[RMDB]
RNA sequence: GGGAACGACUCGAGUAGAGUCGAAAAUAUUCGCGUGGGAAUAUGGGUGGCAUGAACAUCCAACCCUAAAUAUUACUCAAGUCCGAUAGCAAAGAAGUACCGUGAGGGAAAACUGAAAAGCAACCCGUUCUUCCUGUCUAUUCGUAGACAGGAAGAAAAAAGAAACAACAACAACAAC
Reactivity to DMS in 0.01 (KOAc 150mM, MgCl2 10mM, bicine 150mM(pH8.5), 24C), signal-to-noise 3, nucleotides 027 to 126: u020a030u020u000c070g020c080g020u000g030g020g000a080a090u020a060u000g000g010g090u000g010g010c040a130u010g030a110a070c090a020u010c010c010a040a070c010c000c000u000a060a060a040u040a060u020u000a010c010u000c030a040a040g010u000c030c080g000a100u000a090g020c030a060a080a100g000a090a040g000u030a060c060c060g010u040g000a180g010g000g000a060a090a170a080c070u000g020a050a070a140a080g010c060a050a090c010c010c000g020
Reactivity to 2A3 in 0.01 (KOAc 150mM, MgCl2 10mM, bicine 150mM(pH8.5), 24C), signal-to-noise 3, nucleotides 027 to 126: u180a030u000u080c020g020c030g040u080g010g030g040a140a060u110a120u110g020g000g000u010g010g010c150a190u180g070a120a030c020a000u020c010c000a030a040c000c000c000u040a050a080a010u140a050u100u050a050c010u000c060a050a010g030u030c000c010g080a080u110a020g000c010a030a010a120g030a060a010g010u040a050c020c020g040u090g080a120g000g040g000a030a050a080a090c030u040g020a000a100a000a000g000c000a010a010c000c000c000g020
Description: An RNA of 177 nucleotides, treated with DMS and 2A3 and read out base by base. For 2A3, 2,256 sequencing reads were counted. DMS adducts were read by reverse transcription with MarathonRT. It was measured as part of the RMDB libraries RFM100 and RFMREP. Conditions: 150 mM KOAc, 10 mM MgCl2 and 150 mM bicine (pH 8.5), 24 C.